[RMDB]
RNA sequence: GGGAACGACUCGAGUAGAGUCGAAAAAGAGAGUAUUCGUGGUUGUGACGUAUUUAUUAUUCAACCAACAUCAUAUCCUGUGAAUCUACAUUUAAUGGAAUUAUUAAUUAUGAUUGAUGCUUGUAAAUGUAUAGUCUAGGUUCGCCUAGACUAUACAAAAAGAAACAACAACAACAAC
Reactivity to DMS in 0.01 (KOAc 150mM, MgCl2 10mM, bicine 150mM(pH8.5), 24C), signal-to-noise 4, nucleotides 027 to 126: a090g010a100g000a060g010u000a030u020u040c080g030u000g000g000u000u010g000u010g020a130c150g010u000a080u020u030u040a060u070u010a130u000u010c030a020a040c100c050a030a100c070a020u010c020a030u020a030u000c020c050u000g020u040g010a050a030u010c160u020a090c100a050u010u010u000a070a070u000g010g010a050a100u020u000a070u020u010a040a050u030u010a050u010g010a040u010u010g000a050u010g000c090u000u000g020u020a040a070a090
Reactivity to 2A3 in 0.01 (KOAc 150mM, MgCl2 10mM, bicine 150mM(pH8.5), 24C), signal-to-noise 8, nucleotides 027 to 126: a010g190a000g020a020g050u140a110u130u170c090g020u040g040g000u020u010g020u040g070a060c050g020u040a120u150u190u060a180u090u080a070u070u110c030a010a040c040c020a020a020c000a020u030c000a010u020a050u150c000c020u080g030u050g100a040a030u040c050u110a120c040a100u090u110u140a140a070u080g010g090a020a070u100u110a050u070u110a210a090u120u110a070u150g050a080u040u060g010a010u040g010c110u070u030g050u090a010a090a090

Structure probing data (DMS and 2A3) for a 177-nucleotide construct. 2A3 adducts were read by reverse transcription with SuperScript II with manganese. For 2A3, 4,793 sequencing reads were counted.